[RMDB]
RNA sequence: GGGAACGACUCGAGUAGAGUCGAAAAAGUUAGGUUCGCUAUGGAGCAACUCUUUAAGGCAAUAACGAACUAAUUCUAAGCAAGUAAUGGAGAAAUGCCAGGGUCACUAUCUAGCCAUAAUAGUGCUGUAAGUGACUUAGAUUCGUCUAAGUCACAAGUCCGUUAUUCGAUUCGUCGAAUAACGGACAAAAGAAACAACAACAACAAC
Reactivity to 2A3 in 0.01 (KOAc 150mM, MgCl2 10mM, bicine 150mM(pH8.5), 24C), signal-to-noise 3, nucleotides 027 to 156: a010g060u060u040a050g020g070u040u020c010g020c010u030a030u090g060g060a080g070c050a050a120c040u060c050u100u150u150a110a050g060g000c010a050a060u040a020a040c040g020a010a000c050u050a010a000u060u130c030u070a040a040g040c040a040a020g050u090a120a030u160g030g010a040g020a090a050a010u040g000c010c040a040g020g040g000u090c020a010c040u010a010u050c020u050a040g000c000c000a040u040a130a010u030a040g090u040g070c050u030g050u110a190a110g000u010g000a000c000u000u000a000g020a000u000u010c100g030u000c150u000a000a000g000u000c000a000c000a000a000
Reactivity to DMS in 0.01 (KOAc 150mM, MgCl2 10mM, bicine 150mM(pH8.5), 24C), signal-to-noise 1, nucleotides 027 to 156: a040g010u000u000a100g030g000u010u000c040g050c010u000a040u010g000g010a180g030c080a130a090c070u000c070u010u000u010a090a080g010g020c050a110a020u010a030a030c030g000a030a030c010u040a030a100u000u000c030u020a030a100g000c000a160a120g020u010a050a050u000g010g010a090g000a030a100a050u010g010c030c050a020g000g040g030u000c070a000c030u020a060u000c030u000a090g000c060c020a090u000a030a150u000a080g010u000g060c050u030g030u000a080a300g010u000g030a040c000u000u000a000g000a090u000u010c300g010u000c010u010a000a010g050u010c000a010c000a050a120
An RNA of 207 nucleotides, treated with 2A3 and DMS and read out base by base. The RNA was probed in 150 mM KOAc, 10 mM MgCl2 and 150 mM bicine (pH 8.5) at 24 C. The 2A3 profile rests on 1,707 reads.